[RMDB]
RNA sequence: GGGAACGACUCGAGUAGAGUCGAAAAUGGUGUACAAGCUGAUUUUUUCUCAGCUUUGUCAUAUGCCGGCAAACGUCUGGUGAAGGAUUUUAGUGUCAAAGGACAGAUGGUUAGCUUACAGGAGGAACAUAGCUUUCUUCUUCGGAAGAAAGCUAUGAAAAGAAACAACAACAACAAC
Reactivity to DMS in 0.01 (KOAc 150mM, MgCl2 10mM, bicine 150mM(pH8.5), 24C), signal-to-noise 2, nucleotides 027 to 126: u010g020g020u000g000u000a050c030a050a000g000c000u020g000a000u000u020u000u010u000u010c250u000c030a020g000c000u000u000u020g020u000c050a050u000a070u000g020c030c010g010g000c060a040a050a100c080g020u000c040u000g000g010u010g010a140a110g010g000a050u000u000u000u000a080g000u010g020u010c010a070a070a100g020g000a070c040a030g010a080u000g020g000u000u020a090g020c030u000u000a080c090a110g010g020a090g000g000a070a230
Reactivity to 2A3 in 0.01 (KOAc 150mM, MgCl2 10mM, bicine 150mM(pH8.5), 24C), signal-to-noise 1, nucleotides 027 to 126: u050g030g000u020g010u030a030c030a040a010g020c010u000g000a080u040u070u050u070u300u060c020u000c010a010g000c000u050u030u050g000u010c000a040u050a030u220g020c040c000g040g000c050a060a070a040c020g080u010c040u070g040g020u130g040a100a060g050g030a040u060u150u140u180a190g020u140g050u070c020a070a060a000g000g000a010c010a010g010a010u060g040g060u070u010a030g010c000u030u070a030c010a030g090g000a040g000g020a030a120